[RMDB]
RNA sequence: GGGAACGACUCGAGUAGAGUCGAAAAGCAAAUAUUGUCUUAAUUACUUAGGCUAAAAGAAAUAAGUAUUAAAGCGGGACAAGGCAUUGACAUUUGAUACAAAUAUUGAUCAAUGGAUGUCUUAUUUAAACCUCAUCCGGCUUCGGCCGGAUGAGAAGUAGACAUUCCUGUUCGCAGGAAUGUCUACAAAAGAAACAACAACAACAAC
Reactivity to 2A3 in 0.01 (KOAc 150mM, MgCl2 10mM, bicine 150mM(pH8.5), 24C), signal-to-noise 2, nucleotides 027 to 156: g020c050a010a130a160u150a150u240u110g030u070c000u070u080a200a120u210u110a110c010u040u090a010g070g000c030u170a120a060a040a110g020a000a150a030u070a050a000g020u030a040u060u040a130a040a020g100c100g010g000g000a010c020a030a000g020g010c000a000u000u060g050a060c000a040u060u080u090g030a040u100a140c070a050a210a020u210a110u220u190g000a010u000c000a000a010u010g040g000a000u020g000u020c000u080u000a030u070u150u020a070a040a010c000c000u000c000a000u000c000c000g010g010c030u040u110c170g040g000c000c000g000g010a000u000g010a000g000a000a000